[RMDB]
RNA sequence: GGGAACGACUCGAGUAGAGUCGAAAACUCCAUUGUCUAGGCUGGAGUGCAGGGGUGCGAUCCUGGCUCACUACAGCCUUAAGCCCCUGCAGUUCAAGAGAUCCUCCCACCUCAGCCUCCAGUAGGCGGCUCUAUACCCUUUCGAGGGUAUAGAGCCAAAAGAAACAACAACAACAAC
Reactivity to DMS in 0.01 (KOAc 150mM, MgCl2 10mM, bicine 150mM(pH8.5), 24C), signal-to-noise 1, nucleotides 027 to 126: c190u000c000c060a100u010u000g010u000c010u000a070g010g000c060u010g000g000a010g000u010g020c050a040g010g020g010g050u010g000c260g000a070u030c040c090u000g010g030c060u000c200a120c080u020a030c110a040g010c040c060u000u000a060a250g000c000c010c000c000u000g020c020a080g000u000u000c100a060a110g000a090g000a030u000c070c040u000c010c000c040a110c110c060u000c080a140g010c050c000u000c040c060a120g000u010a030g000g020c160
An RNA of 177 nucleotides, treated with DMS and read out base by base. In probing experiments dimethyl sulfate is read out at A N1 and C N3, which are open when not base-paired. For DMS, 837 sequencing reads were counted. The reactions ran in a buffer of 150 mM KOAc, 10 mM MgCl2 and 150 mM bicine (pH 8.5), at 24 C.